[RMDB]
About this RNA
Structure probing data (DMS and 2A3) for a 177-nucleotide construct. For DMS the reverse transcriptase was MarathonRT.
RNA sequence: GGGAACGACUCGAGUAGAGUCGAAAAGCCGUAAUGCGCGCGAAGCCGCAAAAGGCAAACAAGGCGGCCGUACUUUAGAAAUUCAACGUCUGAUUGCUCGCUCUUUGCGUGCGGCAGUAGAUUUGAACACUUAGAAGACUUUCGAGUCUUCUAAGUGAAAAGAAACAACAACAACAAC
Reactivity to DMS in 0.01 (KOAc 150mM, MgCl2 10mM, bicine 150mM(pH8.5), 24C), signal-to-noise 7, nucleotides 027 to 126: g010c010c010g020u010a100a120u000g020c030g020c040g000c040g020a070a090g030c150c120g010c040a040a030a110a130g000g000c020a030a040a060c090a090a060g000g000c020g010g010c130c100g020u010a060c120u000u010u000a080g000a120a120a150u010u000c040a050a070c100g010u000c010u000g000a140u000u000g000c010u000c170g010c020u010c060u000u000u000g010c040g010u000g000c010g010g000c050a050g000u000a050g010a140u000u010u000g000a090a150
Reactivity to 2A3 in 0.01 (KOAc 150mM, MgCl2 10mM, bicine 150mM(pH8.5), 24C), signal-to-noise 5, nucleotides 027 to 126: g030c010c010g020u080a130a050u220g020c030g000c000g000c020g070a050a010g030c070c030g010c040a060a100a090a070g030g000c000a010a020a010c050a020a030g030g000c000g030g030c100c060g050u090a040c050u120u140u140a120g080a090a210a110u160u090c040a080a030c020g010u000c010u040g050a100u020u030g010c050u080c120g000c010u010c030u020u080u120g030c020g010u020g000c000g020g000c000a000g040u100a040g020a110u070u040u140g040a050a020

For 2A3, 6,157 sequencing reads were counted.